[RMDB]
RNA sequence: GGGAACGACUCGAGUAGAGUCGAAAACUUCAAUGGUUCGCCAUUGAAGAAACUUGGUAAACGCUGACACCAUGAAAGAUCGAAAAACGAUCAAAGCGUAAAAAAGUAGUCAGUUCGCUGACUACAAUCAUAAUAGACGCUUCGGCGUCUAUUAUGAAAAAGAAACAACAACAACAAC
Reactivity to DMS in 0.01 (KOAc 150mM, MgCl2 10mM, bicine 150mM(pH8.5), 24C), signal-to-noise 2, nucleotides 027 to 126: c000u000u000c000a010a000u010g000g000u000u040c250g050c000c000a000u000u000g000a000a000g000a070a040a140c030u000u000g000g000u000a090a090a040c000g020c000u010g000a290c250a040c010c010a030u000g010a070a100a110g010a000u000c000g000a060a120a050a160a150c020g000a020u000c000a030a090a050g020c010g030u020a020a040a050a110a100a070g010u000a010g000u000c000a000g000u010u000c210g030c010u000g000a020c000u000a000c020a070a060
Reactivity to 2A3 in 0.01 (KOAc 150mM, MgCl2 10mM, bicine 150mM(pH8.5), 24C), signal-to-noise 1, nucleotides 027 to 126: c010u000u010c000a010a010u000g000g020u070u050c140g010c050c000a000u010u020g000a000a000g000a020a040a010c030u030u040g000g010u060a100a120a010c010g000c030u000g050a050c030a020c060c000a020u030g060a170a040a010g010a000u030c030g070a150a160a000a060a110c020g000a000u000c030a030a010a000g000c000g020u040a080a080a030a030a030a000g010u010a000g000u000c020a000g000u060u100c170g000c070u010g000a000c000u000a000c010a000a030